[RMDB]
RNA sequence: GGGAACGACUCGAGUAGAGUCGAAAACCCUAAGGUAGAAUAGAACCCCGGGGGGUGAUCCACCAGGAGAUGAACGGAAAAAUCACCUCCAGAGGACCCCUUCAGCGAACAGAAGAGACUCCCCUCGUGAGACUGGCGUUCGCGCCAGUCAAAAGAAACAACAACAACAAC
Reactivity to 2A3 in 0.01 (KOAc 150mM, MgCl2 10mM, bicine 150mM(pH8.5), 24C), signal-to-noise 1, nucleotides 027 to 129: c010c010c020u010a110a000g020g000u010a000g080a300a130u090a060g100a160a120c000c010c000c000g010g000g000g030g000g000u020g010a110u000c040c000a020c000c000a070g130g000a160g030a070u150g040a060a050c180g000g060a060a130a000a000a000u000c050a010c000c000u000c000c000a000g010a050g040g010a030c000c030c000c000u020u090c010a010g070c010g010a000a000c000a070g140a130a000g000a030g000a010c050u000c000c000c000c000u020c030g020u100g060a060
Reactivity to DMS in 0.01 (KOAc 150mM, MgCl2 10mM, bicine 150mM(pH8.5), 24C), signal-to-noise 2, nucleotides 027 to 129: c020c000c000u030a000a000g040g020u030a030g020a120a060u050a110g020a060a240c000c000c000c000g070g040g010g010g010g060u040g000a010u000c030c060a260c040c050a180g000g090a120g070a040u000g020a030a120c100g000g000a030a130a030a130a100u000c040a020c020c000u030c010c010a000g020a110g050g000a160c140c040c090c040u000u030c040a100g040c010g000a030a050c010a000g050a060a180g030a060g000a160c070u000c040c020c020c020u020c000g020u070g010a090
Description:
This 170-nucleotide RNA was probed chemically with 2A3 and DMS. The reactions ran in a buffer of 150 mM KOAc, 10 mM MgCl2 and 150 mM bicine (pH 8.5), at 24 C. For 2A3 the reverse transcriptase was SuperScript II with manganese. Source: RMDB library 15KLIB, as collected in RNAgym. DMS adducts were read by reverse transcription with MarathonRT.